Chemical mapping of a 207-nucleotide RNA with 2A3 and DMS. Reactivities are given for positions 27 through 156. The data come from the RNA Mapping Database (RMDB), library RNAMAK.

RNA sequence: GGGAACGACUCGAGUAGAGUCGAAAAGGGGUCACGAUCAAUGACGAGCGUUUGUCAGUCGGCAGCUGAAGCCUCCACGGCUGUAACGACUUGGAUUUAACGCUUAAGACAGAUCGUGACGGAGGCACCCAAAGCUGUUCGUUUCGACGAACAGCAAGGGUACUAGUACGUUCGCGUACUAGUACCCAAAAGAAACAACAACAACAAC
Reactivity to 2A3 in 0.01 (KOAc 150mM, MgCl2 10mM, bicine 150mM(pH8.5), 24C), signal-to-noise 5, nucleotides 027 to 156: g160g050g010g010u000c000a000c000g020a000u010c020a210a160u170g120a200c270g030a020g000c020g000u020u040u120g200u140c140a110g000u000c010g010g000c000a000g000c000u000g010a080a010g010c010c000u000c000c020a020c010g000g010c000u020g000u080a220a120c000g020a020c010u050u160g120g000a080u150u140u160a010a010c000g020c000u010u020a080a000g040a010c040a030g020a010u000c000g000u010g000a000c000g000g000a000g000g000c010a050c000c000c000a030a090a050g000c000u010g000u010u000c010g010u020u030u160c260g150a030c000g000a010a000c000a010g000c000a000a020
Reactivity to DMS in 0.01 (KOAc 150mM, MgCl2 10mM, bicine 150mM(pH8.5), 24C), signal-to-noise 1, nucleotides 027 to 156: g020g000g070g070u000c000a020c000g000a040u010c000a180a200u020g020a100c170g020a000g000c020g000u000u000u040g010u010c000a100g030u000c000g000g030c010a070g000c030u010g000a040a090g000c020c000u000c060c000a300c010g000g010c020u000g030u000a020a140c000g040a000c000u000u000g030g040a130u000u020u010a010a050c000g030c000u010u000a100a190g040a170c060a140g010a000u000c010g000u000g000a020c010g000g010a080g040g080c040a200c010c010c010a130a130a090g000c010u010g020u000u000c010g010u000u000u000c270g040a120c010g010a020a010c000a000g020c040a020a040